The data come from the RNA Mapping Database (RMDB), library RFMREP.
Chemical mapping of a 177-nucleotide RNA with DMS and 2A3.
The RNA was probed in 150 mM KOAc, 10 mM MgCl2 and 150 mM bicine (pH 8.5) at 24 C.
The 2A3 profile rests on 10,777 reads.

[RMDB]
RNA sequence: GGGAACGACUCGAGUAGAGUCGAAAAUACCAAGGGCCAUUGAGAUUGAGGCGCGGCGGUUUUCAUCUCAGGCGAGGGGACCGACGGAUCGUUCGUUACUCCAUGAGUGGCGAGCGGUCUGUGGUUCGAUCUAAUCUAUCUUCGGAUAGAUUAGAUCAAAAGAAACAACAACAACAAC
Reactivity to DMS in 0.01 (KOAc 150mM, MgCl2 10mM, bicine 150mM(pH8.5), 24C), signal-to-noise 5, nucleotides 027 to 126: u010a220c020c010a110a100g010g010g000c020c040a120u010u010g010a060g000a060u000u000g020a080g010g000c030g020c080g020g020c090g010g000u000u010u010u000c050a060u000c010u000c020a080g000g000c020g010a090g010g010g000g000a030c010c010g010a040c010g010g000a010u000c010g020u000u000c010g020u000u000a010c000u000c000c280a170u000g010a010g020u000g000g000c000g000a010g010c010g010g000u000c000u000g010u000g000g000u000u000c060
Reactivity to 2A3 in 0.01 (KOAc 150mM, MgCl2 10mM, bicine 150mM(pH8.5), 24C), signal-to-noise 6, nucleotides 027 to 126: u140a020c010c000a020a040g120g080g010c030c020a100u100u120g030a040g020a070u100u130g030a030g020g040c040g000c060g180g010c080g080g000u030u040u070u060c020a020u010c010u010c010a020g030g000c020g030a060g020g050g000g010a010c010c020g090a030c020g010g000a010u010c000g010u010u000c000g000u010u000a010c010u010c100c120a230u300g010a000g000u000g000g000c000g000a000g010c010g000g000u000c000u000g000u000g000g000u020u030c040
2A3 adducts were read by reverse transcription with SuperScript II with manganese.